[RMDB]
RNA sequence: GGGAACGACUCGAGUAGAGUCGAAAAAAAGCGGUUUAGUUUUCUAGCUAGCAUAGCUACAUUAACUGUGCUCAACGCUUGUGCAACAAUUUCACUAUCUGAUAAAUCUGGUGAGUUUUACAUUAACCGAGAGUGAAUGUUUCGACAUUCACUCUCGAAAAGAAACAACAACAACAAC
Reactivity to DMS in 0.01 (KOAc 150mM, MgCl2 10mM, bicine 150mM(pH8.5), 24C), signal-to-noise 2, nucleotides 027 to 126: a010a050a000g040c030g000g000u010u000u000a050g010u010u000u000u010c130u020a100g020c050u000a060g010c100a110u010a010g010c030u000a050c180a120u000u000a050a030c010u000g020u000g010c020u000c150a110a040c040g000c010u000u000g000u000g010c050a030a010c130a010a040u000u000u000c010a020c000u000a050u000c160u010g000a130u000a050a070a060u000c080u000g030g010u000g000a050g000u000u000u000u000a070c050a080u000u000a090a070c150
Reactivity to 2A3 in 0.01 (KOAc 150mM, MgCl2 10mM, bicine 150mM(pH8.5), 24C), signal-to-noise 1, nucleotides 027 to 126: a000a010a000g060c050g050g050u040u070u090a010g000u010u030u120u110c040u090a030g010c000u030a020g070c010a090u050a070g010c030u030a020c010a180u150u150a070a010c000u000g030u010g030c010u020c060a130a060c070g000c020u030u050g000u080g060c020a020a050c010a040a100u070u210u000c010a040c010u070a090u050c030u090g110a080u260a290a100a170u020c010u040g000g040u010g010a010g000u000u020u000u200a040c050a060u140u110a010a030c040